[RMDB]
RNA sequence: GGGAACGACUCGAGUAGAGUCGAAAAGAUAUGGAUUCCCGAAGAACGUAUUCACAUCGGAAACGAUGUGAGAUACGGGAGGAGAAUCCUAAGUCAAAACACCUGCGAUGUUCGCAUCGCAGGUGAAGAUAUUGAGUAACUUCGGUUACUCAAUAUCAAAAGAAACAACAACAACAAC
Reactivity to 2A3 in 0.01 (KOAc 150mM, MgCl2 10mM, bicine 150mM(pH8.5), 24C), signal-to-noise 4, nucleotides 027 to 126: g020a020u060a040u170g000g010a010u010u010c020c020c020g030a120a060g050a040a010c020g000u000a010u000u020c000a000c010a000u000c010g020g030a060a070a040c010g000a010u000g000u000g010a010g000a000u000a000c000g000g050g010a050g010g020a170g010a030a010u000c000c000u020a160a030g060u040c020a030a030a090a120c010a000c010c010u000g000c010g000a000u010g060u090u130c300g020c200a000u000c000g000c000a000g020g000u000g000a000a000
Reactivity to DMS in 0.01 (KOAc 150mM, MgCl2 10mM, bicine 150mM(pH8.5), 24C), signal-to-noise 6, nucleotides 027 to 126: g000a040u010a300u000g000g000a020u000u010c000c000c000g010a140a120g010a180a160c010g000u000a000u000u000c000a000c000a000u000c010g010g000a110a100a210c000g010a000u000g010u000g000a050g010a010u000a000c010g000g000g000a150g000g000a120g010a010a010u000c000c000u000a030a110g000u010c030a070a090a150a250c000a000c000c000u000g000c000g010a010u000g010u000u010c210g020c000a000u000c000g000c000a000g000g010u000g000a010a030